[RMDB]
RNA sequence: GGGAACGACUCGAGUAGAGUCGAAAACGGUAUCACUGUGUGCUAUGGGAGAUUUCUUGUCGUGGAGUACAGGAAGACCGUGUUCCAUCUAAGUUUUUCACGCCAAUAUUUUUAUCACAGUCAAUAAGCACGUGUACAGGUUCGCUUGUGCACGUGCAAAAGAAACAACAACAACAAC
Reactivity to DMS in 0.01 (KOAc 150mM, MgCl2 10mM, bicine 150mM(pH8.5), 24C), signal-to-noise 9, nucleotides 027 to 126: c010g000g010u000a030u010c140a250c010u000g010u000g010u110g000c010u000a020u010g000g000g000a020g010a260u040u030u020c020u010u000g000u020c020g020u000g010g010a070g010u010a020c000a010g010g010a110a190g000a020c000c010g010u000g010u010u010c000c000a090u040c130u010a060a080g000u000u000u000u010u010c030a050c040g000c040c070a040a080u010a030u000u010u000u030u020a040u010c070a060c100a060g010u020c080a050a080u030a060a180
Reactivity to 2A3 in 0.01 (KOAc 150mM, MgCl2 10mM, bicine 150mM(pH8.5), 24C), signal-to-noise 9, nucleotides 027 to 126: c020g020g020u060a040u120c150a050c120u010g000u000g020u030g040c030u050a070u070g030g100g010a080g040a200u110u250u120c020u040u070g070u090c010g010u000g030g010a030g020u020a020c010a010g000g030a040a060g040a030c000c000g000u010g020u020u000c000c010a010u010c040u090a080a130g020u040u020u010u070u070c020a020c050g040c010c010a050a030u050a130u120u130u040u070u050a070u120c030a040c010a060g080u060c050a080a100u110a250a020